[RMDB]
RNA sequence: GGGAACGACUCGAGUAGAGUCGAAAAGAUAUGGAGCGUCUACCGUUCGAAGAACUCGGAAACGAGGGAGAACGUAGCGCUCCUAAGUCAAAACAACGUGUAGCUUCUUCGGAAGCUACACGUUGAAGCUUUAGAGAUUGUUCGCAAUCUCUAAAGCAAAAGAAACAACAACAACAAC
Reactivity to DMS in 0.01 (KOAc 150mM, MgCl2 10mM, bicine 150mM(pH8.5), 24C), signal-to-noise 4, nucleotides 027 to 126: g000a020u000a300u000g020g010a000g010c000g010u000c010u010a050c140c150g030u010u000c010g020a110a160g000a150a190c010u000c010g020g010a130a090a220c000g000a010g000g000g010a090g000a010a000c010g020u000a020g000c040g000c000u000c000c010u010a000a060g000u010c040a060a090a120a200c000a000a010c010g000u010g010u000a010g000c010u000u000c010u000u000c180g010g000a010a010g010c000u010a000c000a010c000g010u000u000g000a050a110
Reactivity to 2A3 in 0.01 (KOAc 150mM, MgCl2 10mM, bicine 150mM(pH8.5), 24C), signal-to-noise 3, nucleotides 027 to 126: g030a000u070a040u150g000g000a010g010c010g040u050c040u020a060c180c120g020u020u010c050g130a300a030g000a090a020c000u000c020g010g020a120a090a050c010g000a020g000g010g020a070g000a000a010c010g010u000a000g010c010g000c010u000c000c000u000a000a010g010u010c000a010a020a080a150c000a000a000c000g000u000g020u000a000g000c000u010u010c020u070u120c300g020g000a000a000g000c000u000a000c000a010c000g000u010u000g000a000a000
An RNA of 177 nucleotides, treated with DMS and 2A3 and read out base by base. As a SHAPE reagent, 2A3 marks flexible, mostly unpaired nucleotides at the ribose 2'-OH. For DMS, 3,410 sequencing reads were counted. The data come from the RNA Mapping Database (RMDB), library TTRDEL. DMS adducts were read by reverse transcription with MarathonRT. 2A3 adducts were read by reverse transcription with SuperScript II with manganese. Conditions: 150 mM KOAc, 10 mM MgCl2 and 150 mM bicine (pH 8.5), 24 C.